[RMDB]
RNA sequence: GGGAACGACUCGAGUAGAGUCGAAAAGGAAGGUGUGAGGGUACUUUCCAUAUGCCCCCAGGGUAGGGACUGCCUCAGUCCCUUCUGUAUGCCCUACUGCAUUGAACAACCUCUUCCACAUGAUGGGAUAAGGAAACCUGUUCGCAGGUUUCCUUAUAAAAGAAACAACAACAACAAC
Reactivity to DMS in 0.01 (KOAc 150mM, MgCl2 10mM, bicine 150mM(pH8.5), 24C), signal-to-noise 2, nucleotides 027 to 126: g000g010a030a040g000g010u010g020u020g000a080g030g020g020u000a020c020u010u000u000c020c010a120u010a070u000g000c050c030c010c110c060a070g010g020g030u000a010g000g010g020a020c020u000g000c160c090u000c050a110g000u000c020c010c000u010u020c030u010g000u000a080u010g000c010c010c000u010a100c080u030g000c060a070u000u000g030a110a130c160a060a090c030c020u000c040u000u020c010c000a090c110a130u000g020a130u000g010g010g000
Conditions: 150 mM KOAc, 10 mM MgCl2 and 150 mM bicine (pH 8.5), 24 C. An RNA of 177 nucleotides, treated with DMS and read out base by base. Reactivities are given for positions 27 through 126.